Source: RMDB library OK3TST, as collected in RNAgym. The record gives the reactivity of an RNA of 207 nucleotides to DMS and 2A3. High DMS reactivity at an A or C suggests that its Watson-Crick edge is free. Values cover nucleotides 27 to 156. The reactions ran in a buffer of 150 mM KOAc, 10 mM MgCl2 and 150 mM bicine (pH 8.5), at 24 C. 2A3 adducts were read by reverse transcription with SuperScript II with manganese.

[RMDB]
RNA sequence: GGGAACGACUCGAGUAGAGUCGAAAAACUCUCGAGAGCAGCUGUGCGGUUCGGGGUCCCGGGACCUCGGUGAGUUCGACGGCUGGCCGCAGCUCGGCCUGGACACGUUCACCGACGGCCUCGCCGCAAUCCUCGAGCAGGUGACGCGCUGAUGGGCCUUAGAAUUCUAGUUCGCUAGAAUUCUAAGAAAAGAAACAACAACAACAAC
Reactivity to DMS in 0.01 (KOAc 150mM, MgCl2 10mM, bicine 150mM(pH8.5), 24C), signal-to-noise 1, nucleotides 027 to 156: a060c050u000c020u010c000g020a200g000a090g040c030a070g030c040u010g020u010g000c040g040g020u000u000c040g020g000g060g020u000c000c000c010g000g030g000a040c000c010u000c000g020g000u000g010a050g010u020u010c020g000a110c060g030g010c000u010g010g020c020c090g000c080a220g000c200u000c020g000g050c000c010u000g030g020a070c040a120c040g000u010u010c010a060c000c000g000a050c060g070g020c010c000u000c040g060c060c020g020c070a100a070u000c040c010u000c000g010a070g010c040a070g010g020u030g000a090c080g010c030g000c030u010g010a120u010g010g020g010c100
Reactivity to 2A3 in 0.01 (KOAc 150mM, MgCl2 10mM, bicine 150mM(pH8.5), 24C), signal-to-noise 3, nucleotides 027 to 156: a010c030u030c010u010c040g060a040g020a030g050c050a030g010c080u140g050u040g130c010g030g000u060u100c050g000g000g020g030u080c020c010c000g000g080g010a130c030c040u000c000g030g000u010g000a040g030u080u160c080g150a210c050g240g050c060u040g000g000c000c030g060c070a070g050c080u100c050g000g000c000c000u040g010g030a030c050a010c100g020u000u010c010a020c000c000g010a040c060g000g000c030c000u020c010g030c010c000g000c020a010a060u050c000c000u000c010g000a010g020c060a020g050g040u040g050a050c010g040c000g000c060u030g010a080u090g030g040g000c000